[RMDB]
RNA sequence: GGGAACGACUCGAGUAGAGUCGAAAAUUACCGCCCAGGAUGGGGUGCAGCGUUCCUGCAAUAUCCAGGGCACCUAGGUGCAGCCUUGUAGUUUUAGUGGACUUUAGGCUAAAGAAUUUCGCUAGCAAAAAUCUUUAAGGGUUCGCCCUUAAAGAAACUUUAAGUAACCGUUCGCGGUUACUUAAAGAAAAGAAACAACAACAACAAC
Reactivity to 2A3 in 0.01 (KOAc 150mM, MgCl2 10mM, bicine 150mM(pH8.5), 24C), signal-to-noise 1, nucleotides 027 to 156: u040u010a060c000c020g000c000c000c010a010g020g010a030u000g050g060g050g140u000g030c000a000g010c000g100u130u030c010c010u000g000c000a000a080u020a000u070c030c010a000g020g000g010c010a080c000c030u090a030g100g020u010g050c020a000g060c010c000u060u110g060u180a050g000u030u030u030u030a040g010u040g020g000a010c000u140u080u040a020g000g000c040u070a100a120a000g080a040a080u060u100u210c060g000c050u020a030g050c040a010a070a180a130a240u020c010u010u000u000a060a000g000g000g050u010u090c130g050c000c020c010u000u010a000a000a000g000a010a000a000